[RMDB]
RNA sequence: GGGAACGACUCGAGUAGAGUCGAAAAGUGCCGGCAAUACAGUGUGUAUGGAGGUCUCAAUGGCUCGGAAGUGCCAGCAAACCAGCGUAGAUAUUAGCAGACGUAUGGGCGUAAGACUUUUAUUGAAAAAAGUACAUAAGCUUCGGCUUAUGUACAAGAUAUGAACGCACUUCGGUGCGUUCAUAUCAAAAGAAACAACAACAACAAC
Reactivity to DMS in 0.01 (KOAc 150mM, MgCl2 10mM, bicine 150mM(pH8.5), 24C), signal-to-noise 1, nucleotides 027 to 156: g010u000g000c030c010g010g040c020a120a040u000a100c030a140g030u000g040u030g030u010a100u000g000g030a260g040g020u000c010u010c090a040a230u000g010g010c010u000c010g000g050a150a060g030u010g050c000c030a040g000c010a060a060a060c030c000a150g040c040g030u000a170g050a150u000a120u000u010a090g040c010a070g010a040c040g010u000a080u010g030g010g030c070g010u000a040a040g010a070c020u000u000u000u000a080u010u010g000a010a070a050a040a010a130g010u010a010c000a000u000a000a010g000c010u000u000c300g120g000c010u000u030a000u000g060u000a000c000a000a010
Reactivity to 2A3 in 0.01 (KOAc 150mM, MgCl2 10mM, bicine 150mM(pH8.5), 24C), signal-to-noise 2, nucleotides 027 to 156: g080u030g030c010c000g020g010c030a000a060u080a070c070a080g050u020g000u000g040u210a090u140g050g000a030g010g040u000c030u000c070a020a150u080g000g010c020u010c070g010g070a040a020g000u030g030c000c020a040g050c060a020a010a100c010c020a000g030c010g020u050a060g100a150u040a070u120u100a010g000c100a020g020a060c010g060u040a140u120g030g000g000c030g030u040a110a000g040a020c040u030u010u180u170a080u110u150g000a110a040a040a060a000a010g000u000a000c000a000u000a010a000g000c000u000u070c150g090g000c000u000u000a000u000g000u000a000c000a000a010